[RMDB]
RNA sequence: GGGAACGACUCGAGUAGAGUCGAAAAGUCUCCCGAUUCGUCGGGAGACCGAGAAAUUCAGGUGAUUUGCUACCUUUAAGUGCAGCUAGAUAUUCAAAGGAAACACCAUGGCGUUCGCGCCAUGGAAUGAAACAUAGUCAUUCGUGACUAUGUUUCAAAAAGAAACAACAACAACAAC
Reactivity to DMS in 0.01 (KOAc 150mM, MgCl2 10mM, bicine 150mM(pH8.5), 24C), signal-to-noise 8, nucleotides 027 to 126: g000u000c000u000c000c000c000g010a020u000u010c170g020u000c000g000g000g000a010g000a000c000c020g000a090g000a300a080a120u000u000c070a020g000g010u000g000a120u010u000u010g000c010u000a020c010c000u000u000u010a010a010g010u000g000c010a030g010c240u000a060g010a090u000a070u000u000c070a040a070a090g010g000a060a060a060c160a160c010c000a000u000g000g010c000g030u000u010c210g010c010g020c000c000a010u000g000g000a040a050
Reactivity to 2A3 in 0.01 (KOAc 150mM, MgCl2 10mM, bicine 150mM(pH8.5), 24C), signal-to-noise 7, nucleotides 027 to 126: g000u000c000u000c000c000c000g010a010u030u060c150g030u000c000g060g000g000a020g000a010c000c000g020a030g090a030a160a040u240u160c060a010g000g040u030g080a290u080u060u120g010c010u010a020c010c000u110u240u240a030a010g010u010g000c020a000g000c040u100a040g040a200u120a130u230u220c120a140a080a040g070g030a110a110a020c030a020c020c010a000u000g000g000c010g010u040u040c220g010c010g000c040c010a000u010g000g010a000a010
An RNA of 177 nucleotides, treated with DMS and 2A3 and read out base by base. High 2A3 reactivity points to a flexible backbone, as in loops and unpaired stretches. The DMS profile rests on 12,207 reads. The RNA was probed in 150 mM KOAc, 10 mM MgCl2 and 150 mM bicine (pH 8.5) at 24 C.